Overview: Chemical mapping of a 177-nucleotide RNA with DMS and 2A3. The DMS profile rests on 3,362 reads. Source: RMDB library OK1LIB, as collected in RNAgym.
RNA sequence: GGGAACGACUCGAGUAGAGUCGAAAAGAUGGGAACGACUCGAGUAGAGUCGAAAUUAAGAAUCGGACGCAUGAGAACCGAGACAGACAUGCAAUCGCGAACUAGAGGAGAAACUCCUCUAGAAAUAAUCCUAAUAUAAUUUCGAUUAUAUUAGGAUAAAAGAAACAACAACAACAAC
Reactivity to DMS in 0.01 (KOAc 150mM, MgCl2 10mM, bicine 150mM(pH8.5), 24C), signal-to-noise 3, nucleotides 027 to 126: g020a120u030g000g000g000a080a100c000g000a000c010u000c000g000a110g010u040a100g000a010g000u000c000g000a000a040a050u110u020a110a100g020a220a060u000c020g000g000a130c090g000c090a070u030g030a060g010a130a040c060c050g000a080g000a140c100a100g010a090c050a010u030g040c020a200a070u020c070g000c150g020a050a270c010u010a000g000a020g030g010a060g010a150a130a090c090u000c000c000u000c030u000a000g000a050a060a010u040a090
Reactivity to 2A3 in 0.01 (KOAc 150mM, MgCl2 10mM, bicine 150mM(pH8.5), 24C), signal-to-noise 3, nucleotides 027 to 126: g040a260u290g000g000g020a000a040c000g000a000c000u000c010g030a020g110u170a010g020a000g000u000c000g000a000a000a000u140u060a110a030g070a050a020u080c010g020g000a000c090g000c030a040u030g000a000g030a120a030c040c020g030a020g050a040c070a020g040a020c020a010u040g000c020a010a070u220c100g040c040g110a070a050c000u000a000g000a000g000g020a010g070a040a110a030c130u000c000c000u000c000u000a000g000a000a000a000u090a000